[RMDB]
RNA sequence: GGGAACGACUCGAGUAGAGUCGAAAAACAUAUUACGAUAUGAUUCAGAUGGUGUCUUACUGGUUCGUACCAAGGGACAUAAUGGUUUCUUGUUUCCAACCGAAGAACAAGUGGCGAGCCUGAAUAAAAAACUGACUGCCGUUCGCGGCAGUCAGAAGAAUACGUUUAUGUUCGCAUAAACGUAUUCAAAAGAAACAACAACAACAAC
Reactivity to 2A3 in 0.01 (KOAc 150mM, MgCl2 10mM, bicine 150mM(pH8.5), 24C), signal-to-noise 5, nucleotides 027 to 156: a000c040a030u150a040u090u160a070c090g060a030u020a020u130g070a070u060u120c060a060g080a150u110g060g050u060g040u040c010u030u100a110c060u110g020g020u030u070c050g030u070a030c020c010a020a020g020g000g020a020c020a020u170a090a110u120g130g000u000u000u020c000u000u000g020u000u050u000c020c000a050a050c030c020g030a080a040g020a060a020c040a080a030g020u030g080g000c030g020a010g020c010c020u010g060a040a030u130a080a080a030a010a010a020c000u000g000a000c000u000g000c020c010g030u050u060c220g010c000g080g020c000a000g000u000c000a000g000a000a000
Reactivity to DMS in 0.01 (KOAc 150mM, MgCl2 10mM, bicine 150mM(pH8.5), 24C), signal-to-noise 2, nucleotides 027 to 156: a100c040a050u000a090u000u000a080c120g020a090u020a080u000g000a120u000u000c040a100g000a080u010g000g010u010g010u000c030u000u000a060c070u000g030g020u010u000c120g040u000a110c040c010a030a140g010g000g020a040c040a050u000a080a100u000g020g010u000u000u000c050u000u000g010u000u000u010c000c030a060a190c080c060g000a150a080g000a060a080c010a040a100g000u000g010g020c030g010a140g050c010c010u000g010a070a090u040a000a060a040a050a050a120c000u010g020a000c000u000g020c040c000g030u000u010c300g010c020g050g010c000a000g000u000c010a020g000a010a070